[RMDB]
RNA sequence: GGGAACGACUCGAGUAGAGUCGAAAAUCCACUAUGAGUCUAGUCACUAAAUAAACACAAUUAGCUACUGUGUGUAAUAGUGAGUGUUGAUAACACAAAAUAAUAGUAUAGUUUUGGAAGAUUAUACGCGCCCUUGCUCCGUUCGCGGAGCAAGGAAGUAACACUACCAGUUCGCUGGUAGUGUUACAAAAGAAACAACAACAACAAC
Reactivity to 2A3 in 0.01 (KOAc 150mM, MgCl2 10mM, bicine 150mM(pH8.5), 24C), signal-to-noise 5, nucleotides 027 to 156: u030c040c010a040c080u130a190u220g120a040g080u070c060u070a020g030u010c030a000c020u010a030a020a030u040a010a040a000c010a000c010a040a080u130u070a090g080c060u160a080c050u010g000u000g000u000g020u030a010a030u010a030g010u010g010a020g010u030g010u040u070g110a200u150a230a020c050a000c030a040a110a070a030u220a080a080u070a110g010u020a020u000a020g020u000u040u120u170g100g030a110a070g010a070u020u020a010u020a030c020g040c010g050c050c000c000u000u010g000c000u000c010c000g010u040u040c130g010c020g170g000a000g000c000a000a000g000g000a000a000
Reactivity to DMS in 0.01 (KOAc 150mM, MgCl2 10mM, bicine 150mM(pH8.5), 24C), signal-to-noise 2, nucleotides 027 to 156: u000c010c020a150c060u000a130u010g020a140g000u000c050u000a220g020u000c020a030c010u000a010a020a100u000a160a120a040c020a020c010a040a030u000u030a300g020c190u000a100c040u000g010u000g000u020g020u010a130a300u000a000g020u010g000a070g020u010g000u000u000g010a130u010a050a100c040a060c020a050a050a070a130u010a090a300u000a050g000u000a020u000a020g000u000u000u000u000g010g010a110a190g000a010u000u000a020u000a010c010g010c130g020c110c000c000u000u000g010c000u000c000c000g020u000u000c300g010c070g030g030a010g000c000a010a010g000g000a000a030